[RMDB]
RNA sequence: GGGAACGACUCGAGUAGAGUCGAAAAGGUGAAUGUGAAUGGGCCUACUUAUGGUGAUCCUAACGAGUUUGCGAAGCGGAUUGAGCGGCAGCAGCGUGAUGCUUUGAACGCGUUGGCUUACAUGUGAGGGCUAUUAUAGUUUCGACUAUAAUAGCCCAAAAGAAACAACAACAACAAC
Reactivity to DMS in 0.01 (KOAc 150mM, MgCl2 10mM, bicine 150mM(pH8.5), 24C), signal-to-noise 6, nucleotides 027 to 126: g010g010u000g020a080a050u010g010u010g000a070a080u010g000g010g000c040c030u000a100c110u010u000a070u000g020g020u000g000a060u000c050c020u010a070a080c080g010a080g010u000u000u010g020c050g010a070a080g020c020g000g010a140u010u010g000a100g000c040g000g010c080a060g010c040a060g010c050g010u000g000a130u010g010c060u000u000u010g010a060a070c080g000c040g010u000u000g000g000c070u000u000a080c130a050u000g010u000g000a250
Reactivity to 2A3 in 0.01 (KOAc 150mM, MgCl2 10mM, bicine 150mM(pH8.5), 24C), signal-to-noise 2, nucleotides 027 to 126: g080g010u080g030a160a070u140g040u060g080a130a070u100g010g060g070c030c010u020a030c030u140u090a070u190g050g000u020g040a030u060c000c020u000a040a020c010g010a030g070u040u080u120g040c040g020a090a040g010c040g010g050a090u070u100g050a030g030c040g030g010c010a010g010c020a020g060c030g070u020g010a030u060g050c000u030u040u070g030a050a020c000g000c000g050u030u020g000g050c010u030u060a030c010a050u230g030u050g070a090